An RNA of 177 nucleotides, treated with 2A3 and DMS and read out base by base. For DMS, 2,654 sequencing reads were counted. DMS adducts were read by reverse transcription with MarathonRT. The RNA was probed in 150 mM KOAc, 10 mM MgCl2 and 150 mM bicine (pH 8.5) at 24 C. 2A3 adducts were read by reverse transcription with SuperScript II with manganese.

RNA sequence: GGGAACGACUCGAGUAGAGUCGAAAACGCAUUUUCGCUAUCGGCUGCGGCCUCGCGGUGGCAGUCGGCCUAUGGUACGCCGUCGAGCGCACCGCUUUCGGCGUGAAACUGCGCGCUGCCGUCGAUAAUGGUAGCAUGGUUUCGACCAUGCUACCAUAAAAGAAACAACAACAACAAC
Reactivity to 2A3 in 0.01 (KOAc 150mM, MgCl2 10mM, bicine 150mM(pH8.5), 24C), signal-to-noise 2, nucleotides 027 to 126: c030g000c060a100u070u070u200u190c080g010c100u100a030u060c010g030g010c000u020g000c000g040g000c030c070u070c020g000c020g000g010u000g000g000c030a030g020u050c010g030g030c000c000u190a250u140g060g000u090a040c080g000c000c020g160u110c080g030a090g050c060g010c040a020c010c060g010c020u000u100u060c050g010g000c050g000u030g020a070a070a050c050u090g000c000g000c000g000c010u030g010c000c000g020u060c010g000a020u040a070
Reactivity to DMS in 0.01 (KOAc 150mM, MgCl2 10mM, bicine 150mM(pH8.5), 24C), signal-to-noise 4, nucleotides 027 to 126: c150g010c120a080u000u000u010u010c140g000c090u000a020u010c010g040g020c020u000g010c020g000g010c040c050u010c090g030c050g010g000u000g000g000c040a110g020u000c050g010g020c130c150u000a110u000g010g010u000a020c080g000c000c000g010u010c230g000a130g010c000g010c060a040c050c030g010c140u000u000u010c090g000g000c030g020u000g000a080a060a060c020u000g010c010g040c300g020c020u000g000c010c000g010u000c020g000a030u000a050
Source: RMDB library OK2TST, as collected in RNAgym.